[RMDB]
RNA sequence: GGGAACGACUCGAGUAGAGUCGAAAAGGCGCGCAUACCAACUUUUCCACAAAGGAGAUGCGUGCUGAUGGCGGAAUCAAGGCCAUCGAGGAAGCUAUCGAGAAGCUGAGCAAGCGCCACGAGCGGCGGCCACUAUAACUUUCGAGUUAUAGUGGCCAAAAGAAACAACAACAACAAC
Reactivity to DMS in 0.01 (KOAc 150mM, MgCl2 10mM, bicine 150mM(pH8.5), 24C), signal-to-noise 3, nucleotides 027 to 126: g000g020c010g030c000g010c020a010u000a110c080c080a080a260c040u000u020u010u000c140c170a140c220a050a030a050g010g000a190g010a030u000g030c010g000u000g010c000u010g010a020u000g000g020c020g030g000a110a110u000c090a090a110g000g010c020c030a060u010c010g020a110g000g000a080a060g030c080u010a050u000c050g020a100g010a140a110g010c000u000g000a230g000c090a100a090g000c050g000c110c020a060c110g010a100g010c060g000g010c150
Reactivity to 2A3 in 0.01 (KOAc 150mM, MgCl2 10mM, bicine 150mM(pH8.5), 24C), signal-to-noise 2, nucleotides 027 to 126: g020g000c000g010c000g000c010a020u020a200c030c040a080a150c040u080u040u040u090c120c060a110c160a120a020a000g080g010a110g000a010u000g000c000g020u000g020c010u020g020a000u020g000g000c060g000g090a120a080u160c070a060a110g150g030c010c010a010u000c000g000a020g030g020a150a050g030c030u040a010u140c040g000a070g000a160a000g000c030u030g010a010g020c070a060a000g010c030g020c000c040a050c090g060a050g100c040g000g020c050
This 177-nucleotide RNA was probed chemically with DMS and 2A3. The RNA was probed in 150 mM KOAc, 10 mM MgCl2 and 150 mM bicine (pH 8.5) at 24 C. For 2A3 the reverse transcriptase was SuperScript II with manganese. DMS adducts were read by reverse transcription with MarathonRT.